[RMDB]
RNA sequence: GGGAACGACUCGAGUAGAGUCGAAAACUCGCUGGCGCCGGCUGGGCAACGAUCCGAGGGGACUAUCCCUCUCGAGAAUCGGCAAAUGGGCCCCUCGCUCGUAUCUCCGAGAGGAGACGAGAAGGAGAAACCCGAUCGUUCGCGAUCGGGAAAAGAAACAACAACAACAAC
Reactivity to 2A3 in 0.01 (KOAc 150mM, MgCl2 10mM, bicine 150mM(pH8.5), 24C), signal-to-noise 4, nucleotides 027 to 129: c000u010c020g000c000u030g020g000c060g080c040c010g020g000c030u100g050g050g000c040a040a110c020g000a010u000c000c010g020a000g050g010g000g010a000c040u140a140u180c010c030c000u020c020u000c000g150a180g010a050a080u010c010g000g000c030a030a060a110u090g000g020g010c000c000c000c000u000c010g030c000u000c000g020u110a180u000c030u000c000c030g010a040g000a090g100g000a000g010a000c000g000a010g020a010a040g070g030a070g020a080a020a000
Reactivity to DMS in 0.01 (KOAc 150mM, MgCl2 10mM, bicine 150mM(pH8.5), 24C), signal-to-noise 2, nucleotides 027 to 129: c040u020c080g030c040u030g020g010c030g060c030c030g000g000c020u010g000g000g120c140a160a070c030g030a060u020c030c020g000a030g000g000g000g040a180c200u050a190u110c000c000c000u020c020u000c020g030a080g040a090a030u150c020g050g000c040a040a020a130u080g020g040g000c070c040c030c040u000c070g040c000u020c010g000u090a150u070c010u010c030c040g010a130g010a200g050g000a030g000a030c000g000a010g020a000a000g000g000a130g030a080a060a160